RNA sequence: GGGAACGACUCGAGUAGAGUCGAAAAGCUGAGUAUACGAGGUUAGUUCAUUCUCGUAUGCAUGAUUGGACAAAUUAAAAUCUCAAUUUGGAUCAGGGCCUCCCUCCUGCGACGGCCGAACAUACAAACGUUGAUAUCAAUUCGUUGAUAUCAACGUAAAAGAAACAACAACAACAAC
Reactivity to 2A3 in 0.01 (KOAc 150mM, MgCl2 10mM, bicine 150mM(pH8.5), 24C), signal-to-noise 6, nucleotides 027 to 126: g000c030u090g030a000g030u020a010u000a010c010g010a010g070g030u120u120a060g050u130u210c050a040u160u030c020u000c000g000u010a010u000g000c010a050u110g030a080u030u140g050g030a010c030a010a060a050u070u120a080a120a120a200u080c070u020c090a040a080u040u010u050g080g000a060u050c030a040g020g010g020c000c000u000c000c000c010u040c020c020u040g010c030g040a040c040g030g010c020c020g010a030a010c050a030u170a040c040a020a130
Reactivity to DMS in 0.01 (KOAc 150mM, MgCl2 10mM, bicine 150mM(pH8.5), 24C), signal-to-noise 6, nucleotides 027 to 126: g010c040u010g010a090g020u000a030u000a010c010g010a020g010g010u000u000a090g000u000u020c140a090u000u000c010u000c010g010u000a010u000g020c030a130u010g010a080u000u000g010g010a090c050a040a010a060u010u010a050a070a100a100u010c100u010c070a040a040u000u010u010g010g010a090u010c030a080g010g000g010c020c030u000c030c020c020u000c030c020u000g000c070g010a080c130g020g000c050c050g010a010a020c060a070u000a110c190a030a070